[RMDB]
RNA sequence: GGGAACGACUCGAGUAGAGUCGAAAAGAAGGUGAAGGUCUUCCGCGUUCACGGAUAUUUUGAAAAGAAUGGGAGGAAGUUUAAGUUCACCAAGGAGUACAGGGGAAUAAAGGAGGAAGACGUAAAGAAUUGAAUAACGUUUCGACGUUAUUCAAUUAAAAGAAACAACAACAACAAC
Reactivity to DMS in 0.01 (KOAc 150mM, MgCl2 10mM, bicine 150mM(pH8.5), 24C), signal-to-noise 9, nucleotides 027 to 126: g010a130a100g010g020u000g010a050a040g010g010u010c020u000u000c020c030g020c080g030u000u000c040a090c120g010g010a110u010a080u000u010u020u010g000a110a090a120a090g010a030a030u000g020g010g000a100g010g010a040a050g010u010u000u010a060a130g010u010u000c030a030c030c030a070a100g000g000a080g010u000a070c130a080g000g010g000g010a080a080u010a050a090a110g010g010a080g010g010a040a030g010a060c090g010u010a050a060a100g000
Reactivity to 2A3 in 0.01 (KOAc 150mM, MgCl2 10mM, bicine 150mM(pH8.5), 24C), signal-to-noise 5, nucleotides 027 to 126: g030a040a040g020g010u020g020a040a020g050g030u010c010u010u000c010c010g100c020g080u030u050c030a020c060g020g020a040u050a110u170u260u120u140g020a030a030a040a060g020a010a010u050g040g020g050a070g000g020a030a020g010u020u120u210a090a050g010u020u010c010a000c020c000a010a040g030g010a030g010u070a060c060a070g030g010g000g030a020a070u120a130a120a020g030g010a020g010g000a010a020g050a010c030g020u100a030a070a040g090

This 177-nucleotide RNA was probed chemically with DMS and 2A3.
High DMS reactivity at an A or C suggests that its Watson-Crick edge is free.